[RMDB]
RNA sequence: GGGAACGACUCGAGUAGAGUCGAAAAGAAAGUGUGCACCGUCUCAGCUUUUGUAUACGCAGGACUUUUUGCUGAGACUUUAGUCCGCAUGACUUCGGUCAUGCUGCGUAUACUGGUGCUCACGAAAGGGUACGGGGUCCUUCGGGAUUCCGUACCCAAAAGAAACAACAACAACAAC
Reactivity to DMS in 0.01 (KOAc 150mM, MgCl2 10mM, bicine 150mM(pH8.5), 24C), signal-to-noise 3, nucleotides 027 to 126: g000a140a040a120g000u010g010u010g000c000a000c010c010g000u010c030u020c020a040g010c080u060u020u030u020g010u010a000u000a000c020g010c040a300g000g000a020c000u000u020u000u030u020g010c020u000g000a050g010a060c020u000u020u010a010g010u000c000c000g000c000a010u000g010a010c000u000u030c160g020g020u000c000a010u000g000c060u030g000c010g010u000a010u000a010c020u010g000g000u000g000c000u000c010a000c000g000a080a100a120
Reactivity to 2A3 in 0.01 (KOAc 150mM, MgCl2 10mM, bicine 150mM(pH8.5), 24C), signal-to-noise 6, nucleotides 027 to 126: g120a020a070a000g010u000g000u010g000c000a010c010c010g100u040c020u010c060a090g030c060u100u160u150u070g010u010a010u000a010c000g000c010a030g000g040a010c000u070u050u030u140u080g020c040u120g080a020g020a110c000u010u010u020a000g000u000c000c010g000c000a000u000g000a000c000u010u050c200g050g000u000c000a000u000g020c020u020g000c000g000u000a000u000a010c000u010g000g000u000g000c010u020c000a000c000g040a070a040a010